Overview:
An RNA of 207 nucleotides, treated with 2A3 and read out base by base. The data come from the RNA Mapping Database (RMDB), library OK3TST. Conditions: 150 mM KOAc, 10 mM MgCl2 and 150 mM bicine (pH 8.5), 24 C. For 2A3, 934 sequencing reads were counted.

[RMDB]
RNA sequence: GGGAACGACUCGAGUAGAGUCGAAAAGCGCUGCGCCGGGCGGGCUUCCGGGGCGUCGGGGGCGGCAUGGCGUCCUCGGCAGCCGGCAGCAGCAGUCGCCGCUUGCGCGCCACCCCGCCGCCGCCGCUCCUGACGGCGACGCCUUCGUCGAUGACGAAUACAAUGUGUAAUUCGUUACACAUUGUAUAAAAGAAACAACAACAACAAC
Reactivity to 2A3 in 0.01 (KOAc 150mM, MgCl2 10mM, bicine 150mM(pH8.5), 24C), signal-to-noise 1, nucleotides 027 to 156: g070c020g000c030u110g020c070g010c040c050g060g030g000c050g060g050g010c020u080u000c020c000g000g000g010g020c020g000u010c000g000g010g000g000g030c010g000g020c050a090u140g000g000c000g000u070c030c010u000c000g080g000c040a010g060c030c020g060g000c050a050g040c000a010g000c020a020g090u050c020g000c000c020g050c070u040u090g010c030g000c010g080c080c000a020c060c010c010c000g010c010c010g010c000c010g040c020c000g050c000u020c030c050u060g020a040c000g030g010c000g020a020c040g030c010c020u020u040c000g000u000c020g120a160u280g060a030c010g020a000